RNA sequence: GGGAACGACUCGAGUAGAGUCGAAAAAUUCGUGCUAUUAAGCGAUAUCGAACUCAGCGGCAUAUGCUUUCUUGAAGCCAGCUUCACGCAUGGUGCGCUUGCUGAUUUUGCGAGGGAAUUUGUACUGGCUGUUAGGCUUAAUCCACCAAAAGCAGGCGUGAAUCAAAAGUUUCGACUUUUGAUUCACAAAAGAAACAACAACAACAAC
Reactivity to 2A3 in 0.01 (KOAc 150mM, MgCl2 10mM, bicine 150mM(pH8.5), 24C), signal-to-noise 5, nucleotides 027 to 156: a000u110u080c030g010u020g040c040u080a070u290u130a150a040g010c030g040a060u050a050u160c050g020a040a050c010u010c070a020g000c030g030g000c020a030u050a020u150g030c020u050u140u070c030u060u120g050a040a010g020c040c000a040g050c030u090u100c060a020c060g030c040a080u060g080g000u050g050c070g010c010u060u100g000c000u020g070a090u040u050u090u100g020c030g010a070g020g060g000a020a090u090u020u140g040u100a100c020u020g060g000c010u020g070u110u090a030g030g000c000u030u030a030a020u000c030c020a000c020c000a030a070a040a060g040c030a010g040g030c060
Reactivity to DMS in 0.01 (KOAc 150mM, MgCl2 10mM, bicine 150mM(pH8.5), 24C), signal-to-noise 2, nucleotides 027 to 156: a140u000u000c030g020u000g030c030u000a110u000u010a050a090g030c010g010a120u000a100u000c050g010a070a090c080u000c040a080g020c030g030g000c020a080u010a060u010g010c050u000u000u000c050u000u020g010a040a070g000c050c030a060g020c000u000u000c090a080c090g020c020a160u000g030g030u020g010c030g040c040u010u000g020c040u000g000a070u000u010u000u000g010c130g020a140g010g030g010a040a100u010u010u000g030u000a080c050u000g010g020c030u020g010u000u000a100g020g010c030u000u010a060a110u000c060c040a050c040c010a060a050a070a070g020c050a010g000g030c080
Conditions: 150 mM KOAc, 10 mM MgCl2 and 150 mM bicine (pH 8.5), 24 C. This 207-nucleotide RNA was probed chemically with 2A3 and DMS.